This 177-nucleotide RNA was probed chemically with 2A3 and DMS. It was measured as part of the RMDB library M2PK50. For 2A3 the reverse transcriptase was SuperScript II with manganese. Values cover nucleotides 27 to 126. For DMS, 6,262 sequencing reads were counted.
RNA sequence: GGGAACGACUCGAGUAGAGUCGAAAACGACCGCAGUUCGCUGCGGUCGAAAAGAACUGUCUACCGUUCGCCUAGCCGGUGUCAGUUUAAGGGCGGAGAUUAAAACCCUGACGUUCGCGUCAGGGAAGUUGCUAUUAUACUUCGGUAUAAUAGCAACAAAAGAAACAACAACAACAAC
Reactivity to 2A3 in 0.01 (KOAc 150mM, MgCl2 10mM, bicine 150mM(pH8.5), 24C), signal-to-noise 5, nucleotides 027 to 126: c010g000a000c010c010g030c000a010g000u060u110c170g020c110u010g030c030g010g000u000c010g000a000a010a000a020g020a020a010c010u030g010u030c040u130a050c020c010g020u080u130c030g080c030c060u070a050g050c030c000g020g020u020g030u040c030a030g000u020u070u110a070a040g040g000g040c070g070g020a100g000a070u140u240a060a090a100a120c000c000c000u000g000a010c000g010u030u080c300g000c010g100u000c000a000g000g000g000a000a000
Reactivity to DMS in 0.01 (KOAc 150mM, MgCl2 10mM, bicine 150mM(pH8.5), 24C), signal-to-noise 4, nucleotides 027 to 126: c010g010a010c000c000g010c000a010g010u000u010c190g000c000u000g010c000g010g010u000c000g000a010a040a110a140g000a030a030c020u010g010u000c020u010a020c020c010g000u000u010c080g010c100c050u010a110g020c300c020g010g010u000g000u000c010a020g000u000u000u000a060a100g000g000g000c060g000g000a110g000a110u000u000a050a080a120a100c000c000c000u010g000a010c000g020u000u010c190g020c010g010u000c000a010g000g010g010a010a010